[RMDB]
RNA sequence: GGGAACGACUCGAGUAGAGUCGAAAAAUGUGUUGCUUUCUCACAGAUAGGAAAAUGGAUUACUUAGGAGUUUGGAGCAUAUAGUAUAGUAAGUAGGUAAGAGCAGGGACUAUGGUCAGAGUCUAGCCUCCAAAUUAGCAGCUGAGCAACAGUGGCACGAAAUAAGCCUGUUCGCAGGCUUAUUUCGAAAAGAAACAACAACAACAAC
Reactivity to DMS in 0.01 (KOAc 150mM, MgCl2 10mM, bicine 150mM(pH8.5), 24C), signal-to-noise 1, nucleotides 027 to 156: a100u020g010u000g050u010u000g000c010u010u010u000c000u000c040a220c120a040g000a100u010a080g010g000a050a000a070a150u000g010g010a140u000u000a140c050u000u000a090g020g010a080g010u010u010u000g030g000a120g040c040a120u010a080u010a230g000u000a080u000a040g000u010a040a070g000u020a040g000g010u010a090a150g000a120g020c020a100g010g010g000a020c030u030a060u000g000g040u010c000a070g000a110g010u000c070u000a080g010c010c000u010c000c010a030a020a070u010u010a070g000c030a050g000c030u000g010a130g030c040a050a040c040a030g030u000g000g010c010a130
Reactivity to 2A3 in 0.01 (KOAc 150mM, MgCl2 10mM, bicine 150mM(pH8.5), 24C), signal-to-noise 2, nucleotides 027 to 156: a010u050g000u010g000u030u010g010c080u030u040u030c030u070c020a040c020a040g090a110u120a040g050g080a010a000a180a110u140g020g040a040u110u080a060c000u050u040a070g020g030a030g050u080u030u030g010g010a010g000c000a000u110a030u060a090g070u010a020u020a110g040u040a080a080g020u060a030g050g050u040a070a020g010a020g080c020a040g050g040g000a020c020u030a050u110g060g030u040c060a040g000a020g110u000c010u010a010g010c010c000u000c000c010a040a060a100u110u060a010g000c010a000g050c000u010g050a000g050c020a000a020c010a040g010u010g050g000c020a010